[RMDB]
RNA sequence: GGGAACGACUCGAGUAGAGUCGAAAAGAUAUGGAAUGUGUAGGGAGCUCGCCAUUCGGAAACGAAUGGAUGAGCGAGGAUCUACCAUUCCUAAGUCAAACUGAAGGUGCGUUCGCGCACCUUCAGAGUGAAUAUGUUGGUUCGCCAACAUAUUCACAAAAGAAACAACAACAACAAC
Reactivity to DMS in 0.01 (KOAc 150mM, MgCl2 10mM, bicine 150mM(pH8.5), 24C), signal-to-noise 3, nucleotides 027 to 126: g000a000u000a000u020g000g010a010a000u000g000u030g010u000a000g030g000g000a010g020c000u000c000g010c010c000a020u010u000c000g030g010a010a010a010c010g020a020a010u000g010g000a000u010g020a010g030c010g000a050g020g000a010u020c000u000a010c000c000a010u000u000c000c000u000a000a070g010u000c000a160a110a290c010u000g000a020a000g010g020u000g010c000g020u010u010c300g030c020g010c000a000c000c000u000u000c000a000g010a130
Reactivity to 2A3 in 0.01 (KOAc 150mM, MgCl2 10mM, bicine 150mM(pH8.5), 24C), signal-to-noise 2, nucleotides 027 to 126: g000a010u010a010u060g000g010a020a000u010g220u020g000u080a000g010g000g010a010g000c000u000c000g010c000c000a000u010u000c000g000g000a000a010a010c000g010a000a010u000g020g010a040u040g010a000g000c020g010a070g000g000a000u000c010u010a000c000c000a000u000u000c000c000u000a000a000g010u000c010a000a100a060c000u000g000a010a000g010g000u010g000c010g020u050u180c300g000c010g000c180a000c000c000u000u010c000a010g000a000
The record gives the reactivity of an RNA of 177 nucleotides to DMS and 2A3. It was measured as part of the RMDB library TTRDES. The reactions ran in a buffer of 150 mM KOAc, 10 mM MgCl2 and 150 mM bicine (pH 8.5), at 24 C. For DMS the reverse transcriptase was MarathonRT. Reactivities are rounded to 0.1 and cut off at 0 and 3.